[RMDB]
RNA sequence: GGGAACGACUCGAGUAGAGUCGAAAAUGGCUUCGACAGGAGUAGUUUGACUAGGAUGGCAUACCGCUUUGGGCAAAGCGUAAAAAGCCUAAAUAAAAUUAAACGCAAACAACGCGAAAUUUGCUCCUGCUUACGCUAAAGUUGCGUGAGUUCAGUUUCAAUCAUAUGACUUCGGUCAUAUGAUUGAAAAAGAAACAACAACAACAAC
Reactivity to 2A3 in 0.01 (KOAc 150mM, MgCl2 10mM, bicine 150mM(pH8.5), 24C), signal-to-noise 2, nucleotides 027 to 156: u120g030g000c050u010u000c060g030a090c030a020g010g010a020g010u060a020g020u080u090u110g100a110c060u070a060g100g000a050u080g050g020c040a040u060a150c040c070g010c020u000u050u020g030g020g010c080a070a070a000g000c020g070u090a000a060a020a040a000g000c000c000u030a040a000a020u090a000a020a000a000u140u040a040a090a010c000g000c010a030a090a250c010a050a050c170g000c010g060a020a100a110u070u090u050g020c010u010c010c000u010g000c010u030u030a020c020g000c000u050a060a050a100g080u150u110g060c020g010u070g030a040g000u020u160c070a030g000u010u010

Chemical mapping of a 207-nucleotide RNA with 2A3. Conditions: 150 mM KOAc, 10 mM MgCl2 and 150 mM bicine (pH 8.5), 24 C. High 2A3 reactivity points to a flexible backbone, as in loops and unpaired stretches. Source: RMDB library RSTRND, as collected in RNAgym.